[RMDB]
RNA sequence: GGGAACGACUCGAGUAGAGUCGAAAAAAGGCGUGUCUAUGGUUCCCUGUCUUUGGAUACGUAAGAACCGGAGGUAAAGAAAUGUGGACCUGAAGAAAUUUGGGGCCAGCUUGCUCCUCGCUGGCUCCAACGGUUAAGGCUUCGGCCUUAACCGUUGAAAAGAAACAACAACAACAAC
Reactivity to 2A3 in 0.01 (KOAc 150mM, MgCl2 10mM, bicine 150mM(pH8.5), 24C), signal-to-noise 6, nucleotides 027 to 126: a000a000g120g010c070g010u060g010u010c020u030a080u090g070g020u030u070c000c010c010u020g060u010c050u060u070u060g030g010a040u050a060c030g030u080a050a080g030a060a060c010c000g000g020a020g010g030u100a060a080a050g090a020a100a040u080g020u070g050g010a020c010c020u060g060a070a060g080a100a170a070u100u120u120g010g000g000g000c000c000a000g000c010u020u070g020c020u040c000c010u010c030g030c020u020g000g000c000u010c000
Reactivity to DMS in 0.01 (KOAc 150mM, MgCl2 10mM, bicine 150mM(pH8.5), 24C), signal-to-noise 6, nucleotides 027 to 126: a050a040g020g010c040g010u010g000u010c020u010a050u010g000g000u000u000c010c020c010u010g000u010c030u000u010u000g010g010a060u020a060c070g020u020a110a090g010a100a130c050c010g000g000a050g000g010u000a060a090a070g000a050a050a060u020g010u010g010g010a060c040c020u010g000a080a070g000a070a060a120u010u010u010g010g000g000g010c000c000a000g000c010u010u010g010c070u010c020c010u000c150g000c010u010g000g000c000u000c000

Structure probing data (2A3 and DMS) for a 177-nucleotide construct. Reactivities are given for positions 27 through 126. Source: RMDB libraries RFM100 and RFMREP, as collected in RNAgym. Reactivities are rounded to 0.1 and cut off at 0 and 3. For 2A3 the reverse transcriptase was SuperScript II with manganese. The reactions ran in a buffer of 150 mM KOAc, 10 mM MgCl2 and 150 mM bicine (pH 8.5), at 24 C. DMS adducts were read by reverse transcription with MarathonRT.